[RMDB]
RNA sequence: GGGAACGACUCGAGUAGAGUCGAAAAUGGUUGGACAUACUAUGAUGCUGAUGGCAGCCAGUUUGAUAGCUCUCUGUCUCCAUAUCUGAUAAAUGCAGUACUUCAAAUAAGAUUACACUUUAUGGAACAAACUUCCUGAUUUCGAUCAGGAAGUUUGAAAAGAAACAACAACAACAAC
Reactivity to DMS in 0.01 (KOAc 150mM, MgCl2 10mM, bicine 150mM(pH8.5), 24C), signal-to-noise 3, nucleotides 027 to 126: u020g000g000u000u030g000g010a070c110a040u020a110c050u010a060u020g000a110u010g020c040u010g030a110u020g010g040c050a040g010c010c020a030g000u000u030u000g000a110u050a110g000c010u000c050u000c010u000g010u000c010u000c020c040a030u010a040u010c020u000g000a050u000a050a020a100u060g010c020a110g020u000a040c090u000u000c140a060a050a090u050a030a080g000a020u000u020a030c070a140c070u000u000u030a060u010g000g000a130a210
Reactivity to 2A3 in 0.01 (KOAc 150mM, MgCl2 10mM, bicine 150mM(pH8.5), 24C), signal-to-noise 5, nucleotides 027 to 126: u070g030g020u020u090g070g030a020c010a040u110a060c010u040a070u180g050a050u110g040c070u050g010a070u120g060g000c010a000g020c000c000a020g010u050u090u090g130a080u050a040g010c010u020c020u000c040u050g060u030c000u000c020c000a060u030a100u160c040u020g090a060u120a130a060a030u190g050c010a010g030u010a070c030u020u080c060a080a120a170u200a120a050g020a070u070u110a040c050a010c020u050u120u090a110u110g050g010a090a000